Structure probing data (DMS) for a 177-nucleotide construct.
For DMS the reverse transcriptase was MarathonRT.
The RNA was probed in 150 mM KOAc, 10 mM MgCl2 and 150 mM bicine (pH 8.5) at 24 C.
[RMDB]
RNA sequence: GGGAACGACUCGAGUAGAGUCGAAAACUAUUUUAUGAUAUGAUCGCCGAUGGGGAAGGAUGUUGCAAUGGUUUGCCCUGUUAUAUGACUCGAGAGGGUGAUGGCGCGUUAGGAGUAUGCCCAAUGGAUAAAUAUUAAUAUUCGUAUUAAUAUUUAUAAAAGAAACAACAACAACAAC
Reactivity to DMS in 0.01 (KOAc 150mM, MgCl2 10mM, bicine 150mM(pH8.5), 24C), signal-to-noise 1, nucleotides 027 to 126: c020u020a030u020u020u020u010a120u020g000a130u010a110u020g000a090u010c050g020c030c020g000a090u000g000g000g010g000a090a090g010g020a040u000g000u020u010g000c120a130a050u000g010g030u010u010u000g000c050c000c060u040g030u010u030a070u040a060u020g010a020c060u020c050g010a130g010a120g000g010g000u000g010a050u010g040g000c010g020c060g000u010u020a090g000g000a080g020u020a080u040g000c000c020c010a030a120u060g000g010